RNA sequence: GGGAACGACUCGAGUAGAGUCGAAAACAGAAAAGGGCUGGGGACAAAAAGAAGACGAUGUCGAAAAAUUUGAUGUAGAUGUUUUUGUUAUGGGACAUGACUGGGAAGGUGAAUUCGACUUCUUAAAGUAAAUGAUUAGUUUCGACUAAUCAUUUACAAAAGAAACAACAACAACAAC
Reactivity to 2A3 in 0.01 (KOAc 150mM, MgCl2 10mM, bicine 150mM(pH8.5), 24C), signal-to-noise 9, nucleotides 027 to 126: c020a010g150a060a130a020a010g080g030g010c110u080g060g030g010g030a030c060a020a160a020a010a010g100a060a020g050a010c060g030a040u090g020u040c020g070a040a020a020a080a120u160u190u170g070a080u100g040u110a040g030a110u050g080u020u030u020u030u040g080u060u100a100u130g020g000g010a010c030a040u060g050a060c060u050g010g000g040a040a020g050g010u090g030a030a030u080u040c030g010a010c000u030u010c000u030u120a090a100a010
Reactivity to DMS in 0.01 (KOAc 150mM, MgCl2 10mM, bicine 150mM(pH8.5), 24C), signal-to-noise 6, nucleotides 027 to 126: c060a100g010a070a070a080a090g000g000g030c080u020g000g000g010g030a080c070a040a060a090a090a070g010a090a090g000a090c160g000a080u020g010u010c020g010a020a050a090a100a110u020u020u020g020a110u020g010u010a090g010a050u010g000u000u000u000u000u000g010u030u020a050u020g000g000g000a040c030a030u010g000a060c090u010g000g010g010a060a090g000g000u000g000a080a080u010u010c030g000a050c040u000u010c000u010u010a040a060a110
Record summary:
This 177-nucleotide RNA was probed chemically with 2A3 and DMS. The reactions ran in a buffer of 150 mM KOAc, 10 mM MgCl2 and 150 mM bicine (pH 8.5), at 24 C. The 2A3 profile rests on 8,538 reads. It was measured as part of the RMDB library OK1LIB. For DMS, 15,065 sequencing reads were counted. For 2A3 the reverse transcriptase was SuperScript II with manganese. Reactivities are given for positions 27 through 126.